[RMDB]
RNA sequence: GGGAACGACUCGAGUAGAGUCGAAAAGAUAUGGACAUCGUUAUGGUCCGCACGAGAGGUGUUUCAUUCGGAAACGAAUGAAACACUCCCCACCUCGUGAACUACGGAACGUCGAUGUCCUAAGUCAGUGCAUAUAUAUGUUCGCAUAUAUAUGCACAAAAGAAACAACAACAACAAC
Reactivity to 2A3 in 0.01 (KOAc 150mM, MgCl2 10mM, bicine 150mM(pH8.5), 24C), signal-to-noise 4, nucleotides 027 to 126: g020a020u050a030u130g000g000a000c000a010u000c020g090u240u270a140u280g100g020u020c010c000g010c000a000c000g030a020g010a110g000g300u010g000u000u010u000c000a000u010u000c010g020g000a030a040a050c010g000a000a010u010g000a000a010a000c000a000c000u020c000c000c020c010a030c000c010u000c000g010u010g030a050a060c180u300a060c170g000g020a060a010c000g020u010c000g020a010u000g000u000c010c000u000a050a000g030u020c080a040
Reactivity to DMS in 0.01 (KOAc 150mM, MgCl2 10mM, bicine 150mM(pH8.5), 24C), signal-to-noise 7, nucleotides 027 to 126: g020a030u000a250u010g000g000a030c000a010u000c010g030u010u020a040u020g010g000u000c000c010g000c000a000c000g000a010g010a170g050g030u000g010u000u000u000c000a000u010u010c010g010g000a050a040a150c010g020a020a010u000g010a000a000a010c010a010c010u000c100c060c040c090a300c290c000u010c000g010u000g000a050a050c150u020a300c030g000g000a020a020c010g010u000c000g000a010u000g000u000c000c010u000a010a080g000u000c030a140